[RMDB]
RNA sequence: GGGAACGACUCGAGUAGAGUCGAAAAGUACUUGAUCUGGAUGCUAGUUACACAGUAAUCUUAACUAAUGAUGGGAAAUGUCUGCCUUCUUUGGGCAUGUGGAUAAAGAGGCAUCAUUGCAGACUAGCUGCUUGGCUGUAGUAUGUGUAACACUGGGUAGGAUGAUCACAUUCGUGUGAUCAUCCUAAAAAGAAACAACAACAACAAC
Reactivity to 2A3 in 0.01 (KOAc 150mM, MgCl2 10mM, bicine 150mM(pH8.5), 24C), signal-to-noise 2, nucleotides 027 to 156: g030u030a040c050u040u030g090a110u080c050u060g060g020a030u040g050c010u020a020g000u040u070a040c040a010c020a030g030u090a080a120u020c030u130u100a120a050c080u050a150a020u080g080a050u050g000g030g110a030a110a070u100g000u010c010u020g030c050c000u180u180c090u090u150u120g010g030g020c050a050u090g050u100g000g060a050u070a220a160a000g060a030g080g010c030a000u040c010a010u000u090g010c000a000g090a080c010u060a010g020c040u020g010c090u120u090g080g000c030u000g010u060a010g010u030a060u070g050u000g030u040a020a000c020a060c160u070g050g060g000
Reactivity to DMS in 0.01 (KOAc 150mM, MgCl2 10mM, bicine 150mM(pH8.5), 24C), signal-to-noise 1, nucleotides 027 to 156: g010u000a090c090u000u010g010a210u000c040u000g000g030a030u000g000c040u000a170g020u000u010a050c050a050c070a090g040u000a080a080u000c040u000u010a070a070c090u020a070a150u000g000a070u000g020g030g030a010a100a070u000g020u000c070u000g030c070c070u000u020c090u000u010u000g030g000g010c020a070u000g000u000g000g030a120u000a010a080a090g020a090g020g000c050a120u000c030a080u010u000g070c020a040g020a130c050u000a060g000c050u000g000c040u000u000g000g040c000u000g000u010a040g020u010a030u000g020u000g020u000a030a080c050a190c060u000g030g030g100
Source: RMDB library OK3TST, as collected in RNAgym. Chemical mapping of a 207-nucleotide RNA with 2A3 and DMS. Conditions: 150 mM KOAc, 10 mM MgCl2 and 150 mM bicine (pH 8.5), 24 C. Values cover nucleotides 27 to 156. The DMS profile rests on 2,183 reads. The 2A3 profile rests on 892 reads.